The record gives the reactivity of an RNA of 177 nucleotides to DMS and 2A3. The data come from the RNA Mapping Database (RMDB), library OK2TRN. As a SHAPE reagent, 2A3 marks flexible, mostly unpaired nucleotides at the ribose 2'-OH. Conditions: 150 mM KOAc, 10 mM MgCl2 and 150 mM bicine (pH 8.5), 24 C. For DMS, 84,203 sequencing reads were counted.

RNA sequence: GGGAACGACUCGAGUAGAGUCGAAAAGGAUCCUCUCACAGGAUUGUCUCUGUGUUCCGAAAUUUCAACAGUUUUCCUUCGGGACACCUACAGGAAAACUGUAGGUAUAGAGAGUAGGAGAGGAUCGCUAGAGCAGAGUAUUCGUACUUUGCUCUAGAAAAGAAACAACAACAACAAC
Reactivity to DMS in 0.01 (KOAc 150mM, MgCl2 10mM, bicine 150mM(pH8.5), 24C), signal-to-noise 9, nucleotides 027 to 126: g010g000a010u000c000c000u000c000u000c010a140c150a190g010g010a120u010u010g010u000c000u000c000u000g010u010g010u000u000c000c000g000a010a050a180u000u000u000c080a100a120c190a140g010u010u000u000u000c040c040u000u000c030g010g000g000a010c040a050c000c000u000a010c010a000g000g000a110a080a100a150c000u000g000u000a000g000g010u000a050u010a020g000a010g000a040g010u010a120g010g000a020g000a020g010g000a000u000c000g010
Reactivity to 2A3 in 0.01 (KOAc 150mM, MgCl2 10mM, bicine 150mM(pH8.5), 24C), signal-to-noise 9, nucleotides 027 to 126: g040g000a010u000c010c010u000c000u000c010a200c040a070g160g090a220u130u230g110u030c000u000c000u010g050u000g010u040u000c010c000g020a020a050a060u170u210u110c090a160a110c030a110g030u010u010u080u090c010c000u000u010c000g000g000g000a000c000a010c000c000u000a000c000a010g040g020a070a140a110a110c000u000g000u000a000g000g000u030a020u160a060g020a000g000a010g060u120a060g030g030a010g000a000g000g010a000u000c000g000